[RMDB]
The record gives the reactivity of an RNA of 177 nucleotides to DMS.

RNA sequence: GGGAACGACUCGAGUAGAGUCGAAAAGAUAUGGAUAUAGACAUGAAUGCGGCAUCGGAAACGAUGCCGCAUUCAACAGCUAUCAUCCUAAGUCAAAUCUCGCUAGCUGUUCGCAGCUAGCGAGAAACAUUACUUAGGGCUUCGGCCCUAAGUAAUGAAAAGAAACAACAACAACAAC
Reactivity to DMS in 0.01 (KOAc 150mM, MgCl2 10mM, bicine 150mM(pH8.5), 24C), signal-to-noise 2, nucleotides 027 to 126: g020a060u000a300u000g000g000a020u000a030u000a000g000a090c040a180u000g010a020a000u010g040c000g050g020c000a010u040c000g010g000a090a100a230c010g020a010u000g000c000c000g000c010a000u020u010c000a000a080c250a160g010c000u000a020u000c210a010u000c020c000u000a040a200g000u000c020a040a100a140u000c000u000c000g020c010u000a010g010c000u020g000u000u020c180g010c000a000g020c010u000a000g000c000g000a000g000a010a060a110